[RMDB]
Structure probing data (2A3 and DMS) for a 207-nucleotide construct. For 2A3 the reverse transcriptase was SuperScript II with manganese. For DMS, 2,191 sequencing reads were counted. For 2A3, 1,595 sequencing reads were counted. The data come from the RNA Mapping Database (RMDB), library OK3TST. Conditions: 150 mM KOAc, 10 mM MgCl2 and 150 mM bicine (pH 8.5), 24 C.

RNA sequence: GGGAACGACUCGAGUAGAGUCGAAAAAAGAAAACCAGGCGAUGCCGUUACCCUCGCGUUAUUCUUGCAUCUUGGAACAGCCGUCUCGGCGACUGCAUACUACCGAACGACGAUUUAUGAAUUAAUCGACGCAGGAAUAACCCAACUCCGCGGCGGCGGCUAUAUUAACGUUCGCGUUAAUAUAGCCAAAAGAAACAACAACAACAAC
Reactivity to 2A3 in 0.01 (KOAc 150mM, MgCl2 10mM, bicine 150mM(pH8.5), 24C), signal-to-noise 3, nucleotides 027 to 156: a030a000g110a020a090a010a030c030c020a030g050g010c050g110a110u110g000c010c010g010u040u060a050c040c000c010u020c030g060c060g010u010u020a010u020u000c010u010u020g010c010a080u020c030u100u130g030g040a080a040c040a050g000c030c020g070u030c030u020c070g120g040c070g030a030c080u080g030c050a070u100a230c040u070a070c070c030g050a060a070c030g080a030c010g000a020u020u090u100a180u270g200a190a140u110u180a110a020u060c030g040a050c060g030c010a020g020g010a010a000u010a010a010c020c030c000a030a090c050u060c050c070g000c030g040g000c010g050g040c020
Reactivity to DMS in 0.01 (KOAc 150mM, MgCl2 10mM, bicine 150mM(pH8.5), 24C), signal-to-noise 1, nucleotides 027 to 156: a060a020g000a120a100a080a110c040c050a090g030g030c030g000a110u000g050c060c010g020u000u000a050c030c020c010u000c050g070c090g010u000u000a010u010u000c010u030u030g010c030a060u000c010u000u010g010g010a120a100c000a070g000c000c010g070u020c060u020c200g040g010c020g040a030c030u000g000c050a100u010a080c020u000a250c020c020g030a040a100c130g000a070c010g030a050u010u000u000a300u070g010a090a200u000u010a050a080u000c030g100a070c030g000c000a000g000g000a030a020u000a050a060c030c010c010a150a110c060u000c020c030g020c050g020g000c010g020g030c090